[RMDB]
RNA sequence: GGGAACGACUCGAGUAGAGUCGAAAACGGAUUAGGCGCGGAGGCGAAAGUCACCCUCCUCGCAUCGCAAGUUCGUGCUUGCGACUUACACGUAGGGCGAGGGGUGGGCGAAAGUUGCCAUGAGACCAAAAUAUGUAGUUCUUCGGAACUACAUAAACACUAGAUAGGGGUUCGCCCCUAUCUAGUGAAAAGAAACAACAACAACAAC
Reactivity to 2A3 in 0.01 (KOAc 150mM, MgCl2 10mM, bicine 150mM(pH8.5), 24C), signal-to-noise 5, nucleotides 027 to 156: c020g020g030a080u080u100a110g060g000c060g000c010g060g030a040g030g000c050g090a140a030a000g060u060c050a090c020c000c000u030c000c000u010c020g000c000a020u020c010g000c000a000a010g020u240u290c180g150u300g050c000u000u000g010c000g000a000c000u050u100a060c090a010c130g140u130a130g030g080g030c020g030a040g000g030g020g020u220g010g000g000c040g020a030a060a010g110u090u080g030c040c020a030u090g040a020g040a090c010c050a040a030a020a060u080a000u010g000u000a000g010u000u010c000u020u040c150g060g000a000a000c000u010a000c000a000u000a000a010a000
Reactivity to DMS in 0.01 (KOAc 150mM, MgCl2 10mM, bicine 150mM(pH8.5), 24C), signal-to-noise 2, nucleotides 027 to 156: c060g000g070a110u000u030a100g030g010c050g030c030g020g010a170g000g020c030g000a070a090a120g030u000c020a030c010c000c000u000c020c000u000c020g020c110a100u000c020g000c010a020a000g010u000u010c270g010u020g010c020u000u020g020c000g000a010c060u010u020a100c100a140c170g030u020a090g000g040g030c030g000a010g020g010g000g000u010g000g000g000c030g000a050a070a210g000u000u000g000c000c020a100u000g000a100g010a170c020c020a030a060a070a170u000a050u010g030u020a020g000u000u000c000u000u020c300g050g000a010a010c020u000a000c000a020u010a000a040a170
Structure probing data (2A3 and DMS) for a 207-nucleotide construct. Values are in units of 0.01, from 0 to 300, in steps of 10. DMS adducts were read by reverse transcription with MarathonRT.